[RMDB]
Overview: The record gives the reactivity of an RNA of 177 nucleotides to 2A3 and DMS. 2A3 adducts were read by reverse transcription with SuperScript II with manganese. 2A3 is a SHAPE reagent: it acylates the 2'-hydroxyl of flexible nucleotides of all four kinds. It was measured as part of the RMDB library M2PK90.
RNA sequence: GGGAACGACUCGAGUAGAGUCGAAAAUAAAAUAGCGAUUCUCGUUAUAGAAAUGUCCUUAGAGGAUCGCUAUGCACAGAUGUUUUAGUAUCCUAAUACGUAUUUAAGGACAUUUCUAUACAAAAAACUAAACAGAGGGAUUCGUCCCUCUGUUUAGAAAAGAAACAACAACAACAAC
Reactivity to 2A3 in 0.01 (KOAc 150mM, MgCl2 10mM, bicine 150mM(pH8.5), 24C), signal-to-noise 2, nucleotides 027 to 126: u080a030a170a020a060u070a030g050c030g010a010u040u000c000u010c010g060u090u070a030u010a190g020a020a000a000u000g010u000c010c050u010u100a070g010a000g030g000a000u010c020g000c000u010a000u020g040c090a070c080a100g200a190u160g150u050u060u060u100a060g010u000a070u000c000c000u000a110a130u180a130c110g120u160a210u100u300u110a110a020g000g000a000c000a010u000u020u010c000u000a070u000a010c000a010a120a000a120a050a020
Reactivity to DMS in 0.01 (KOAc 150mM, MgCl2 10mM, bicine 150mM(pH8.5), 24C), signal-to-noise 1, nucleotides 027 to 126: u000a070a100a110a020u020a020g030c030g000a060u000u030c020u000c010g020u000u000a030u010a020g000a000a000a000u020g000u000c000c000u000u010a070g000a020g000g010a000u000c050g020c000u000a010u000g020c120a120c180a130g010a050u000g010u040u010u000u000a080g020u010a110u000c040c020u010a110a050u000a120c200g010u000a100u000u010u000a080a010g010g000a000c000a010u000u000u000c010u000a050u010a060c070a010a020a040a040a090a080